Structure probing data (DMS and 2A3) for a 177-nucleotide construct.

RNA sequence: GGGAACGACUCGAGUAGAGUCGAAAAGAUAUGGACUGACUUUCAGCGCGAAACUCCCUGAUCGGAAACGAUCAAGGAGGAGCUGGGUCAGUCCUAAGUCAAAGACCUUAGGUUCGCCUAAGGUCAAGAUAACAUAACUCUUCGGAGUUAUGUUAUCAAAAGAAACAACAACAACAAC
Reactivity to DMS in 0.01 (KOAc 150mM, MgCl2 10mM, bicine 150mM(pH8.5), 24C), signal-to-noise 7, nucleotides 027 to 126: g010a020u000a010u010g000g000a020c000u000g000a020c000u000u010u020c000a010g100c010g070c280g010a170a050a080c000u000c000c000c030u000g010a010u000c000g010g000a000a010a020c010g010a010u000c000a000a010g000g010a020g010g000a010g040c000u000g000g010g000u000c000a000g010u000c000c000u000a000a040g000u000c010a120a130a150g000a010c000c000u000u000a000g000g010u000u010c300g020c000c000u000a000a010g000g010u000c000a010a050
Reactivity to 2A3 in 0.01 (KOAc 150mM, MgCl2 10mM, bicine 150mM(pH8.5), 24C), signal-to-noise 6, nucleotides 027 to 126: g000a000u010a000u040g000g000a000c010u010g010a000c020u230u300u120c300a010g000c010g020c150g260a200a020a010c000u010c000c000c000u000g010a000u010c000g000g000a000a010a000c000g000a000u000c000a000a010g010g000a000g000g010a020g000c000u010g020g000g000u000c010a000g000u000c000c000u000a000a000g000u000c000a000a000a040g000a000c000c000u000u000a020g060g050u040u070c300g140c070c000u000a010a000g100g000u000c000a000a000

2A3 adducts were read by reverse transcription with SuperScript II with manganese.